[RMDB]
RNA sequence: GGGAACGACUCGAGUAGAGUCGAAAAAACUGGAAGCCUACCAAUUUGGUAAGGCUCGCAUGGCCGCAGCUAUGCGGGGCAACGAGGAGAAGGGCCGCGCCCACAACAACCCGUAUGCCCAAGCUGUCUAUCGCCGGUUCGUCCUUCCGCUCGCGGAUGAAGCGUAUAGCUUCGGCUAUACGCUUCAAAAAGAAACAACAACAACAAC
Reactivity to 2A3 in 0.01 (KOAc 150mM, MgCl2 10mM, bicine 150mM(pH8.5), 24C), signal-to-noise 2, nucleotides 027 to 156: a000a000c070u090g040g020a160a000g000c000c000u000a020c010c000a230a300u130u090u300g040g000u060a190a180g000g000c000u000c000g040c040a040u060g010g050c110c010g010c040a040g000c010u060a010u210g120c080g020g000g000g000c000a000a000c000g060a230g180g000a080g010a050a180g020g000g010c110c120g030c040g010c020c090c020a130c040a100a040c010a010a020c040c010c030g000u030a240u070g000c000c000c010a020a010g030c010u020g050u010c050u080a120u120c020g000c030c030g040g000u000u010c000g020u030c010c000u070u000c010c010g040c070u060c010g280c070g000g020a020
An RNA of 207 nucleotides, treated with 2A3 and read out base by base. Conditions: 150 mM KOAc, 10 mM MgCl2 and 150 mM bicine (pH 8.5), 24 C. For 2A3 the reverse transcriptase was SuperScript II with manganese. The 2A3 profile rests on 617 reads. 2A3 is a SHAPE reagent: it acylates the 2'-hydroxyl of flexible nucleotides of all four kinds.